[RMDB]
RNA sequence: GGGAACGACUCGAGUAGAGUCGAAAAGGACUCCGUGAGGAGUCCGUGCAGCGAGAGCUGCACAAGGGCUUAUUGACACACGGUGCCCCUGCUCUUCGAUGUGGAGAAGAGCAGAGUAGUAGGCGCACGAUUUAUAGUGCGCCGUACGAGUGUGUGAAUGUAUCAAGACAUUCGUGUCUUGAUACAUAAAAGAAACAACAACAACAAC
Reactivity to DMS in 0.01 (KOAc 150mM, MgCl2 10mM, bicine 150mM(pH8.5), 24C), signal-to-noise 2, nucleotides 027 to 156: g010g010a020c000u000c000c000g000u000g010a300g020g020a010g080u010c000c000g050u000g020c010a020g000c020g000a300g010a300g010c030u000g070c010a020c010a050a130g000g000g020c010u000u000a090u000u020g010a080c000a040c000a030c010g010g020u010g000c080c000c000c000u000g010c000u000c000u000u000c000g000a300u010g020u000g020g010a300g000a030a020g000a030g010c000a010g010a030g020u010a130g020u010a080g000g020c000g020c010a010c010g000a170u010u000u000a170u000a130g000u000g000c000g010c010c020g010u000a010c030g010a090g000u000g020u000g010u000g010a050
Reactivity to 2A3 in 0.01 (KOAc 150mM, MgCl2 10mM, bicine 150mM(pH8.5), 24C), signal-to-noise 2, nucleotides 027 to 156: g010g000a000c000u000c000c010g040u050g040a050g000g010a000g010u000c000c000g000u000g000c000a010g000c000g010a050g010a000g040c000u010g060c000a000c010a010a040g010g010g000c010u080u120a020u030u140g040a010c000a000c000a000c000g000g000u010g000c000c010c000c000u000g000c000u000c010u000u000c010g040a080u130g060u120g160g070a080g000a010a000g000a000g000c000a000g000a000g000u020a000g000u000a010g000g000c000g000c000a010c000g030a040u030u210u070a170u100a050g000u000g000c000g000c000c000g000u000a000c000g010a020g000u000g000u000g010u000g030a020

An RNA of 207 nucleotides, treated with DMS and 2A3 and read out base by base. For DMS, 4,598 sequencing reads were counted. 2A3 adducts were read by reverse transcription with SuperScript II with manganese. The RNA was probed in 150 mM KOAc, 10 mM MgCl2 and 150 mM bicine (pH 8.5) at 24 C.